[RMDB]
RNA sequence: GGGAACGACUCGAGUAGAGUCGAAAACGCUCCCCUCGGAUCUCCGCCGGGUGGGUUCACAUCCCCAACCCGCGGGCCGGCUGUUCUUCUUUUCCUUUGCUCGUCUUCCCCGGUCAGCCUCCCGAGUGAGGAGUUAUAAGUUCGCUUAUAACUCCUCAAAAGAAACAACAACAACAAC
Reactivity to DMS in 0.01 (KOAc 150mM, MgCl2 10mM, bicine 150mM(pH8.5), 24C), signal-to-noise 1, nucleotides 027 to 126: c150g010c060u000c000c000c020c120u000c010g030g010a170u000c090u000c030c010g010c100c050g040g010g040u010g020g020g000u000u020c160a100c190a100u000c130c010c000c050a080a080c000c010c010g000c040g020g020g050c100c040g010g020c060u000g000u000u000c020u010u000c010u000u010u000u000c020c000u000u000u000g020c030u000c030g020u000c010u000u000c000c010c010c050g000g000u000c040a090g000c050c030u000c000c010c010g010a100g000u020

Source: RMDB library 15KREP, as collected in RNAgym. Structure probing data (DMS) for a 177-nucleotide construct. Reactivities are given for positions 27 through 126. Values are in units of 0.01, from 0 to 300, in steps of 10. Conditions: 150 mM KOAc, 10 mM MgCl2 and 150 mM bicine (pH 8.5), 24 C.